RNA sequence: GGGAACGACUCGAGUAGAGUCGAAAAGCUUGUGAAUGUUCUCAUCUGGGUAAUAAUUGUGACCCAAAGACUGGGCGAUGCAUUUGCCCUCCCAAUACCAUUGGAGAGAAAUGUUCUAAAUGUGCACCCAAUACCUGGGGCCACAGCAUUACCACUACCAUAUAAAUCAUUUCGAUGAUUUAUAUGGAAAAGAAACAACAACAACAAC
Reactivity to 2A3 in 0.01 (KOAc 150mM, MgCl2 10mM, bicine 150mM(pH8.5), 24C), signal-to-noise 9, nucleotides 027 to 156: g030c080u060u040g020u030g090a200a100u070g020u070u020c050u020c080a140u080c090u170g040g000g010u010a020a020u060a070a100u110u030g000u010g020a020c010c000c000a030a020a000g010a010c020u010g010g000g010c030g190a220u050g000c010a000u000u010u060g030c020c000c000u000c010c000c000a060a040u180a300c080c130a100u020u060g040g010a150g010a010g050a210a150a160u160g050u140u100c090u170a030a050a020u030g010u020g000c020a030c000c000c000a010a010u050a080c020c020u010g000g000g010g000c030c000a000c000a000g020c010a010u000u010a000c000c000a070c070u030a060
Reactivity to DMS in 0.01 (KOAc 150mM, MgCl2 10mM, bicine 150mM(pH8.5), 24C), signal-to-noise 3, nucleotides 027 to 156: g010c090u000u000g020u000g010a140a170u000g010u000u000c070u010c010a110u000c090u000g030g000g000u010a020a040u000a080a110u010u010g020u020g010a040c010c010c000a030a070a050g010a110c050u000g000g000g020c000g020a110u000g010c030a080u000u000u000g010c040c030c000u000c020c000c070a080a140u000a190c260c170a160u000u000g010g000a060g020a010g010a070a060a070u000g030u010u000c100u000a050a040a050u000g020u000g020c110a040c010c010c010a020a090u000a100c050c030u000g000g020g000g020c020c010a020c020a030g010c080a050u000u000a010c020c000a090c050u000a260

This 207-nucleotide RNA was probed chemically with 2A3 and DMS. Values cover nucleotides 27 to 156. For DMS, 8,359 sequencing reads were counted. Conditions: 150 mM KOAc, 10 mM MgCl2 and 150 mM bicine (pH 8.5), 24 C.